[RMDB]
RNA sequence: GGGAACGACUCGAGUAGAGUCGAAAAGACGGCGCUUCGGCGCUACGUUGUACGGAAGACAGAAGACCGACCGGCGAAUGCUUCCUCAGUUCGCCGCUCUCGAAGUCGCAGCAGCAGACACGGUUUUUGUUAUUAACUUGUUCGCAAGUUAAUAACAAAAAGAAACAACAACAACAAC
Reactivity to DMS in 0.01 (KOAc 150mM, MgCl2 10mM, bicine 150mM(pH8.5), 24C), signal-to-noise 2, nucleotides 027 to 126: g000a070c110g000g030c010g030c000u020u000c180g010g020c010g010c010u010a040c140g000u000u000g000u010a060c030g000g020a090a100g000a090c080a100g010a140a120g020a070c050c050g000a080c120c000g010g000c010g020a010a060u000g000c090u000u000c030c000u000c080a290g020u000u000c010g020c010c010g010c040u000c030u000c050g010a100a090g000u010c060g010c050a070g000c080a030g010c060a050g000a040c060a060c120g010g010u000u000u000u010